[RMDB]
RNA sequence: GGGAACGACUCGAGUAGAGUCGAAAACCUACACUUCGGUGUAGGAAAAAAGCGUACUACCCUGAGGUGGCGACUACCCACCUGUGGUCCCAAAUAGGACCACAGAGGUCGAACUACCACAUAGGGUAUCGCAAAAAGAUGCUCUUCGGAGCAUCAACCUACGCAUUUGGUUCGCCAAAUGCGUAGGAAAAGAAACAACAACAACAAC
Reactivity to DMS in 0.01 (KOAc 150mM, MgCl2 10mM, bicine 150mM(pH8.5), 24C), signal-to-noise 1, nucleotides 027 to 156: c010c060u010a000c000a040c010u000u000c300g100g000u010g010u000a040g020g000a000a040a060a080a040a030g010c040g030u000a110c090u010a000c000c010c000u000g040a180g060g040u000g000g000c020g010a300c050u010a060c000c040c010a210c120c030u020g000u000g010g000u000c000c020c000a060a210a220u000a040g040g000a000c000c000a040c010a000g000a080g000g020u010c010g030a110a140c030u010a030c000c000a080c030a110u000a020g040g000g000u000a010u000c070g000c040a030a090a040a090a120g000a010u000g010c000u010c010u010u000c300g020g020a080g000c020a010u000c000a020a070
Reactivity to 2A3 in 0.01 (KOAc 150mM, MgCl2 10mM, bicine 150mM(pH8.5), 24C), signal-to-noise 3, nucleotides 027 to 156: c000c000u000a000c000a000c010u090u170c300g100g010u000g000u000a000g000g000a100a170a000a030a000a000g030c040g040u090a080c070u000a000c030c020c010u060g110a090g060g020u010g000g020c000g010a020c020u180a220c000c000c030a040c040c010u000g020u000g000g000u030c030c040c040a190a270a050u260a150g020g000a010c010c000a000c000a000g010a000g000g000u000c000g040a180a060c030u050a040c050c000a050c050a170u300a030g000g010g000u000a010u100c000g010c000a090a090a000a000a000g000a000u000g000c010u010c010u080u130c270g130g000a000g000c000a000u020c000a010a010
Annotation
Chemical mapping of a 207-nucleotide RNA with DMS and 2A3. For 2A3, 2,515 sequencing reads were counted. 2A3 adducts were read by reverse transcription with SuperScript II with manganese. The data come from the RNA Mapping Database (RMDB), library RNAMAK. The DMS profile rests on 1,621 reads. Conditions: 150 mM KOAc, 10 mM MgCl2 and 150 mM bicine (pH 8.5), 24 C. Reactivities are rounded to 0.1 and cut off at 0 and 3. Reactivities are given for positions 27 through 156.